[RMDB]
RNA sequence: GGGAACGACUCGAGUAGAGUCGAAAACAAAAUAUUUUAUGGAUGAUACAUGGAAUCUUUUCUACAAAAGAGGGAAACUGUCUCUUGGUUCUUGAACGAACCCGGAGAGUUCCCGGAAAAGAACAAGUUCGAAACGGAACAGACAUCCCAGAACAAACGAUAGAGCAAGGUUCGCCUUGCUCUAUCGAAAAGAAACAACAACAACAAC
Reactivity to 2A3 in 0.01 (KOAc 150mM, MgCl2 10mM, bicine 150mM(pH8.5), 24C), signal-to-noise 1, nucleotides 027 to 156: c000a000a100a030a020u200a110u050u200u150u100a240u270g010g010a000u020g030a030u070a260c110a050u060g010g150a100a070u000c000u000u020u000u000c020u000a020c020a060a300a080a020g140a160g100g020g020a280a000a060c110u230g180u070c020u010c030u000u000g000g000u030u000c070u200u170g030a170a020c050g000a000a000c000c000c000g000g000a000g000a000g010u000u000c030c000c010g020g000a000a000a000a000g020a050a070c080a160a000g020u000u000c020g000a080a060a250c130g020g070a010a010c020a030g100a030c000a000u020c020c030c030a120g070a160a050c000a050a090a000
Overview
The data come from the RNA Mapping Database (RMDB), library OK3TST. Chemical mapping of a 207-nucleotide RNA with 2A3. The RNA was probed in 150 mM KOAc, 10 mM MgCl2 and 150 mM bicine (pH 8.5) at 24 C. For 2A3, 393 sequencing reads were counted.